[RMDB]
RNA sequence: GGGAACGACUCGAGUAGAGUCGAAAAUGAAGAUAGAAAUAAUUUUAAGAGAAGUAUAACGACAAUAAGCACAUUCACCAGUUCCAAGGCUUGUAUCAAAGUAGGUGACUUUACAGAUAUAAAGAAAGACUAUAUCAAUAUUCGUAUUGAUAUAGUCAAAAGAAACAACAACAACAAC
Reactivity to 2A3 in 0.01 (KOAc 150mM, MgCl2 10mM, bicine 150mM(pH8.5), 24C), signal-to-noise 1, nucleotides 027 to 126: u100g000a040a100g070a050u210a090g040a060a160a000u070a090a030u110u190u140u250a030a060g030a000g000a170a000g060u070a130u040a280a000c010g040a000c020a050a030u040a140a020g050c020a000c000a060u050u010c020a020c010c000a030g030u050u020c030c010a000a030g060g010c010u030u020g000u010a090u050c000a070a060a060g000u030a050g000g060u060g070a010c010u060u030u020a020c000a000g030a060u060a030u040a300a090a000g090a010a090a000
Reactivity to DMS in 0.01 (KOAc 150mM, MgCl2 10mM, bicine 150mM(pH8.5), 24C), signal-to-noise 3, nucleotides 027 to 126: u010g000a110a120g010a130u000a090g010a100a130a090u010a080a050u000u010u000u010a100a160g000a130g010a070a060g000u010a090u020a060a110c040g000a060c100a030a060u000a060a070g010c060a070c070a070u010u000c040a050c070c020a120g010u000u000c030c030a090a090g000g020c050u010u000g010u010a030u000c040a030a050a060g020u000a050g010g000u000g010a080c070u000u000u000a040c090a110g000a050u010a070u000a050a050a090g010a110a090a160

This 177-nucleotide RNA was probed chemically with 2A3 and DMS. The reactions ran in a buffer of 150 mM KOAc, 10 mM MgCl2 and 150 mM bicine (pH 8.5), at 24 C. DMS adducts were read by reverse transcription with MarathonRT. It was measured as part of the RMDB library OK2TST.